An RNA of 177 nucleotides, treated with 2A3 and DMS and read out base by base. The data come from the RNA Mapping Database (RMDB), library RFM100. Values cover nucleotides 27 to 126. The 2A3 profile rests on 607 reads.

RNA sequence: GGGAACGACUCGAGUAGAGUCGAAAAGGCGCUAACAAGGCGAACAAAUGCAGGGCCCAGAAGCUUUCUUGCAGCGCCGGCGCCUUAGCAGGGCGCCAGGCUAAUGAGGGUCACUCAAAGAGGCUGAGUCAUGGGAAUCGUUCGCGAUUCCCAUGACAAAAGAAACAACAACAACAAC
Reactivity to 2A3 in 0.01 (KOAc 150mM, MgCl2 10mM, bicine 150mM(pH8.5), 24C), signal-to-noise 2, nucleotides 027 to 126: g000g000c040g000c090u110a170a100c080a070a140g030g020c000g040a000a000c030a030a030a070u210g000c140a090g020g060g000c000c000c000a040g060a150a000g020c030u170u230u200c090u120u170g080c020a110g000c060g000c000c000g010g000c000g000c000c000u000u000a040g040c160a000g010g000g000c000g030c000c020a000g000g000c010u030a100a100u010g000a010g030g040g000u100c010a040c100u060c000a020a200a040g000a020g050g030c000u000g040a000
Reactivity to DMS in 0.01 (KOAc 150mM, MgCl2 10mM, bicine 150mM(pH8.5), 24C), signal-to-noise 1, nucleotides 027 to 126: g000g010c000g000c000u000a010a080c290a110a080g000g110c060g000a080a110c120a130a060a070u000g000c230a000g000g010g010c020c030c100a140g000a120a220g020c050u000u000u000c050u000u000g000c180a130g000c090g000c000c000g000g000c010g000c070c000u000u000a040g010c300a300g030g000g070c070g140c000c100a100g050g030c000u000a020a070u000g000a020g000g000g000u000c190a150c030u000c000a000a000a060g030a110g020g000c000u000g000a210